RNA sequence: GGGAACGACUCGAGUAGAGUCGAAAAGCUGAUUUCGAUCAGCCAUAUCCUCUAAUGAGACCAGGCCGAGUGCAUCAGUACUCGGCACCACUUCGAAGAAGAAGGAACAGUUGAGGUUCGCCUCAACACGGUUAAGCUGUUUCGACAGCUUAACCGUAAAAGAAACAACAACAACAAC
Reactivity to 2A3 in 0.01 (KOAc 150mM, MgCl2 10mM, bicine 150mM(pH8.5), 24C), signal-to-noise 2, nucleotides 027 to 126: g010c000u020g000a040u080u100u170c280g060a040u000c000a000g010c000c000a010u040a140u060c000c030u040c060u080a160a290u220g040a060g150a210c100c070a090g170g000c000c010g000a000g020u000g000c000a090u100c090a150g020u000a020c000u000c000g000g010c000a010c000c000a000c000u050u040c030g120a250a080g060a060a020g010a020a030g140g030a040a070c080a070g020u000u050g000a000g030g000u060u070c120g100c000c000u000c000a010a010c020
Reactivity to DMS in 0.01 (KOAc 150mM, MgCl2 10mM, bicine 150mM(pH8.5), 24C), signal-to-noise 1, nucleotides 027 to 126: g000c000u040g000a010u000u000u080c150g010a080u000c000a010g000c030c060a040u000a190u000c010c000u000c170u000a100a220u000g020a160g000a040c080c070a160g000g000c040c000g000a030g000u040g000c000a070u000c140a140g060u000a000c050u030c000g030g010c000a020c080c020a170c130u010u000c020g020a180a080g020a140a070g020a030a030g000g020a050a040c240a080g000u000u020g010a020g010g000u000u010c260g010c010c000u010c000a000a000c000
An RNA of 177 nucleotides, treated with 2A3 and DMS and read out base by base. Conditions: 150 mM KOAc, 10 mM MgCl2 and 150 mM bicine (pH 8.5), 24 C. For DMS, 552 sequencing reads were counted. For 2A3 the reverse transcriptase was SuperScript II with manganese. The data come from the RNA Mapping Database (RMDB), library RFMREP. For DMS the reverse transcriptase was MarathonRT.